[RMDB]
An RNA of 177 nucleotides, treated with 2A3 and DMS and read out base by base.
2A3 adducts were read by reverse transcription with SuperScript II with manganese.
RNA sequence: GGGAACGACUCGAGUAGAGUCGAAAAAUUCUCGCGGGAAGCUGGGGGUCAUCAACCCCCAAGGCUAAAUACGUCCCGAGUCCGAUAGCGCAAUAGUAGGGUGACCGAAAGCUGAAAAGAACCCCGACUUAGAACUAGCUUUCGAGCUAGUUCUAAGAAAAGAAACAACAACAACAAC
Reactivity to 2A3 in 0.01 (KOAc 150mM, MgCl2 10mM, bicine 150mM(pH8.5), 24C), signal-to-noise 3, nucleotides 027 to 126: a000u050u020c010u020c030g030c060g000g080g010a060a000g000c000u010g010g000g020g050g020u010c040a090u070c020a260a130c000c000c000c000c000a000a000g010g000c000u020a080a100a030u220a070c050g050u020c010c000c000g000a020g070u050c000c010g080a090u110a020g030c010g010c030a060a140u060a040g070u060a010g010g040g100u070g040a040c020c000g070a070a010a020g040c010u030g040a100a080a000a000g010a040a080c000c000c000c000g020a020
Reactivity to DMS in 0.01 (KOAc 150mM, MgCl2 10mM, bicine 150mM(pH8.5), 24C), signal-to-noise 2, nucleotides 027 to 126: a170u020u010c020u000c010g040c060g000g030g010a130a100g000c040u010g020g060g030g000g000u000c180a060u040c300a100a100c030c000c000c040c020a000a000g010g000c020u000a040a060a160u010a090c170g040u000c020c000c020g010a110g000u020c060c050g000a090u020a100g000c080g010c060a110a070u030a050g000u020a100g000g020g000u000g010a160c010c030g020a060a050a150g020c070u000g000a090a040a100a070g000a120a080c070c000c000c020g020a200